[RMDB]
RNA sequence: GGGAACGACUCGAGUAGAGUCGAAAACGUCGCGCUCCGCCAGUUUUCGGGAAUAGCCGCGGGCAACCAGAAAACCGCCCACUCCGCCCAGCACGGCCCCGCUUAAUGCGGCAAGGUCAGAUCCAAAGUCUCUUCCCAUUUUCGAAUGGGAAGAGACAAAAGAAACAACAACAACAAC
Reactivity to DMS in 0.01 (KOAc 150mM, MgCl2 10mM, bicine 150mM(pH8.5), 24C), signal-to-noise 1, nucleotides 027 to 126: c040g010u000c010g000c090g000c000u000c000c030g000c000c100a070g000u000u040u000u000c000g010g010g000a020a020u040a200g000c000c030g000c220g000g000g000c030a100a150c020c000a130g020a050a000a060a050c020c070g000c000c050c000a170c160u010c040c050g030c000c040c000a090g010c050a010c190g000g000c050c060c000c000g010c060u000u000a010a090u030g000c020g020g000c210a050a040g000g000u000c040a060g000a260u000c020c090a000a220a100
Reactivity to 2A3 in 0.01 (KOAc 150mM, MgCl2 10mM, bicine 150mM(pH8.5), 24C), signal-to-noise 2, nucleotides 027 to 126: c030g010u000c020g000c000g000c010u020c020c030g030c010c010a040g000u000u000u030u110c060g000g000g060a100a080u080a130g030c040c000g030c090g020g020g020c010a010a040c000c000a000g060a010a040a000a010c020c020g000c020c040c000a030c020u010c000c000g030c000c030c000a010g050c050a000c060g010g030c000c000c000c000g010c000u090u160a140a050u180g000c020g010g020c000a060a030g010g000u000c010a000g010a060u010c040c010a010a080a000

About this RNA
The record gives the reactivity of an RNA of 177 nucleotides to DMS and 2A3. For DMS the reverse transcriptase was MarathonRT. The RNA was probed in 150 mM KOAc, 10 mM MgCl2 and 150 mM bicine (pH 8.5) at 24 C. Source: RMDB library RFM100, as collected in RNAgym. 2A3 adducts were read by reverse transcription with SuperScript II with manganese.